Chemical mapping of a 177-nucleotide RNA with 2A3 and DMS. For 2A3 the reverse transcriptase was SuperScript II with manganese. The data come from the RNA Mapping Database (RMDB), library M2PK50. The reactions ran in a buffer of 150 mM KOAc, 10 mM MgCl2 and 150 mM bicine (pH 8.5), at 24 C.
[RMDB]
RNA sequence: GGGAACGACUCGAGUAGAGUCGAAAAGGCGGGGCGUUCGCGCCCCGCCAAAGUCGGUAUGCGUAAUAAUUAAUCGUACGCAUCGAUAAAUAUCCGACAUUAAAAGCCGAUCAUUCGUGAUCGGCAAAGAUACUGUAUUGUUCGCAAUACAGUAUCUAAAAGAAACAACAACAACAAC
Reactivity to 2A3 in 0.01 (KOAc 150mM, MgCl2 10mM, bicine 150mM(pH8.5), 24C), signal-to-noise 2, nucleotides 027 to 126: g000g000c000g020g080g020g030c090g040u080u110c160g060c020g110c090c030c040c060g070c020c000a010a000a000g020u000c000g000g020u070a010u010g000c010g030u000a020a080u060a140a150u260u200a070a100u210c130g040u020a000c000g000c030a040u040c030g040a040u090a170a110a010u130a040u010c010c000g000a010c010a020u130u190a070a110a120a010g000c000c000g010a000u000c000a020u030u120c190g060u040g010a000u000c000g000g000c000a010a000
Reactivity to DMS in 0.01 (KOAc 150mM, MgCl2 10mM, bicine 150mM(pH8.5), 24C), signal-to-noise 2, nucleotides 027 to 126: g030g210c030g070g050g150g180c060g120u000u010c180g000c040g160c010c000c050c010g010c010c000a010a030a050g010u000c000g000g000u000a020u000g010c010g000u000a010a020u010a110a130u020u020a120a090u020c190g020u010a000c000g000c000a010u010c080g010a080u010a040a080a090u020a060u010c010c000g030a050c050a110u010u020a100a070a140a170g000c000c000g020a030u000c000a050u000u000c170g010u000g000a000u000c000g020g000c010a000a010